This 177-nucleotide RNA was probed chemically with DMS and 2A3.
RNA sequence: GGGAACGACUCGAGUAGAGUCGAAAACAUGCAGCAUGGUACCAUGCGCUCGGUACAGCGCGAUCGUACGUACCAUACUAGCAUGAGACGAUCCAUACGUACCAUGCGAUCUACCAUGGCUAGGUACCUUAGCAUAGACCUUCGGGUCUAUGCUAAGAAAAGAAACAACAACAACAAC
Reactivity to DMS in 0.01 (KOAc 150mM, MgCl2 10mM, bicine 150mM(pH8.5), 24C), signal-to-noise 4, nucleotides 027 to 126: c020a000u000g010c030a030g000c020a010u000g000g000u010a020c010c080a120u000g010c020g000c040u000c080g010g020u000a100c300a130g010c160g010c010g010a030u000c120g020u000a050c260g010u010a010c020c000a030u000a030c030u000a100g040c000a010u000g010a100g000a140c140g000a040u000c020c050a150u020a090c140g010u000a010c010c000a140u010g020c040g000a030u000c070u000a110c100c060a080u000g010g010c050u000a170g000g000u000a030c060
Reactivity to 2A3 in 0.01 (KOAc 150mM, MgCl2 10mM, bicine 150mM(pH8.5), 24C), signal-to-noise 4, nucleotides 027 to 126: c010a010u030g000c010a000g000c000a000u000g000g000u010a000c040c020a090u170g010c000g020c000u030c070g150g040u230a170c120a120g070c160g000c010g070a040u090c040g010u060a070c040g020u000a010c010c000a000u030a020c030u040a070g010c000a010u000g000a000g020a040c060g020a010u010c020c020a070u070a140c050g000u000a000c000c000a010u040g000c010g000a020u010c020u050a050c020c010a030u060g110g000c030u020a050g000g000u030a020c000

It was measured as part of the RMDB library OK2TRN. The RNA was probed in 150 mM KOAc, 10 mM MgCl2 and 150 mM bicine (pH 8.5) at 24 C. DMS adducts were read by reverse transcription with MarathonRT.